[RMDB]
Annotation:
This 177-nucleotide RNA was probed chemically with 2A3 and DMS. As a SHAPE reagent, 2A3 marks flexible, mostly unpaired nucleotides at the ribose 2'-OH. Conditions: 150 mM KOAc, 10 mM MgCl2 and 150 mM bicine (pH 8.5), 24 C. For DMS, 1,630 sequencing reads were counted. It was measured as part of the RMDB library OK1LIB. Values cover nucleotides 27 to 126.

RNA sequence: GGGAACGACUCGAGUAGAGUCGAAAAGAUCUUUUUGGUGGCACAGUGGCAACACAGAGCAAGCAACAAUGGGUGAUGGAGUCUGUUGAAGGCAAUCUAAAAGCAUGCGCAAGAGCUGACAGCGCACGUGACACCUACAGUUCGCUGUAGGUGUCACAAAAGAAACAACAACAACAAC
Reactivity to 2A3 in 0.01 (KOAc 150mM, MgCl2 10mM, bicine 150mM(pH8.5), 24C), signal-to-noise 2, nucleotides 027 to 126: g010a050u040c040u060u180u000u220u240g060g000u040g020g010c070a070c080a170g050u080g010g000c030a060a020c010a080c070a040g100a010g040c050a060a000g020c000a020a060c050a060a040u040g090g000g000u010g000a070u130g100g000a010g080u000c040u060g020u090u100g050a070a030g100g000c070a060a090u080c020u150a070a000a060a070g070c040a000u160g010c030g040c050a090a020g010a000g110c070u020g010a040c040a060g000c030g000c050a000c030
Reactivity to DMS in 0.01 (KOAc 150mM, MgCl2 10mM, bicine 150mM(pH8.5), 24C), signal-to-noise 1, nucleotides 027 to 126: g000a130u040c000u020u010u020u020u000g000g040u030g010g010c040a020c080a000g000u010g000g000c020a010a070c060a130c060a100g000a070g030c080a040a040g000c030a060a010c070a080a100u020g020g040g000u000g000a050u000g000g040a130g000u000c070u000g000u030u010g000a040a230g000g000c110a030a070u050c080u020a010a030a100a030g010c030a050u020g000c070g030c000a080a080g040a110g000c090u000g040a020c150a070g000c070g020c000a120c240